[RMDB]
RNA sequence: GGGAACGACUCGAGUAGAGUCGAAAAUCAUCAAGUGGUUCGAGGAAUCAAUCGAGUGUCCGACGUGUCGCAUGGAACAGGACGACGACCCGAUGGUGGUAUUUCGUCGUAACAUCGAGGAGAAUAUGCGUCUCAAGUACCGUGACGCAAUCAGGUCAUAAUAGACGGCUUUCGAGCCGUCUAUUAUAAAAGAAACAACAACAACAAC
Reactivity to DMS in 0.01 (KOAc 150mM, MgCl2 10mM, bicine 150mM(pH8.5), 24C), signal-to-noise 2, nucleotides 027 to 156: u000c040a050u000c050a020a180g040u010g080g000u000u010c040g010a150g010g070a080a060u000c050a110a130u000c020g000a080g080u000g020u010c040c010g050a140c060g000u010g020u010c040g040c080a150u000g060g050a140a200c050a100g030g000a180c040g010a060c050g020a070c000c020c020g000a140u000g010g090u000g070g030u020a050u000u000u000c030g030u000c020g000u000a070a080c030a100u000c050g000a090g000g000a160g020a060a120u000a060u000g000c010g030u000c020u000c030a080a100g000u020a080c080c080g000u010g000a040c030g040c020a010a120u000c020a170g000g020u000c100
Reactivity to 2A3 in 0.01 (KOAc 150mM, MgCl2 10mM, bicine 150mM(pH8.5), 24C), signal-to-noise 2, nucleotides 027 to 156: u000c000a000u000c000a040a010g050u060g090g050u030u060c030g100a050g040g120a110a150u090c060a050a050u110c050g030a020g030u100g060u050c020c000g040a080c040g100u110g050u090c120g000c120a030u080g140g030a030a110c000a060g050g000a020c000g000a030c030g000a000c000c000c030g070a040u050g050g070u090g000g040u080a300u000u080u010c050g020u000c010g030u060a040a030c010a100u030c010g000a020g000g000a070g020a130a030u260a060u040g020c010g020u000c000u000c020a070a060g120u070a090c020c060g010u010g000a000c000g020c010a000a000u020c050a000g020g090u090c000
Structure probing data (DMS and 2A3) for a 207-nucleotide construct.
The RNA was probed in 150 mM KOAc, 10 mM MgCl2 and 150 mM bicine (pH 8.5) at 24 C.
For DMS, 2,392 sequencing reads were counted.
It was measured as part of the RMDB library OK3TST.
2A3 adducts were read by reverse transcription with SuperScript II with manganese.